[RMDB]
RNA sequence: GGGAACGACUCGAGUAGAGUCGAAAAAAGUCCGAAGGUGUCAUCGACGAAGAAGGUCGGGAAACGACCAACAUCACGAUCGAUGGCAACGCGCUCAACGAGACGCUGUACUUCUUCGAACCGAACAACGUCAACUGGAAGAACUCCCCGGAGUACACCUACUCACAAAAUUCGUUUUGUGAGUAGGAAAAGAAACAACAACAACAAC
Reactivity to DMS in 0.01 (KOAc 150mM, MgCl2 10mM, bicine 150mM(pH8.5), 24C), signal-to-noise 2, nucleotides 027 to 156: a170a060g000u020c050c010g030a100a040g010g010u000g020u030c010a020u000c010g000a080c030g010a060a070g040a110a300g020g000u000c020g000g040g010a090a260a150c010g010a020c000c010a000a090c040a140u000c040a110c090g020a080u000c050g020a020u000g050g000c030a040a020c040g000c080g000c020u000c070a130a120c100g010a200g000a050c000g010c010u010g020u000a090c020u000u000c020u000u000c050g020a060a060c050c000g000a020a140c060a000a000c040g000u000c020a050a140c070u010g000g000a130a080g020a030a110c100u000c040c010c010c010g010g000a100g000u000a060c040a180
Reactivity to 2A3 in 0.01 (KOAc 150mM, MgCl2 10mM, bicine 150mM(pH8.5), 24C), signal-to-noise 4, nucleotides 027 to 156: a000a000g060u050c040c010g000a060a030g100g000u020g000u000c010a000u010c000g010a000c030g000a040a080g030a050a030g020g000u010c000g010g030g070a130a210a010c030g010a020c030c030a010a040c040a080u090c030a000c070g100a230u000c000g000a000u000g000g000c010a010a000c020g000c000g010c020u040c010a100a130c200g040a040g070a170c040g000c060u070g010u090a100c040u050u060c000u020u050c010g030a080a050c040c010g050a040a040c070a080a070c090g090u070c100a080a080c080u090g030g020a040a040g040a080a090c050u010c020c010c020c030g040g010a010g040u090a020c010a000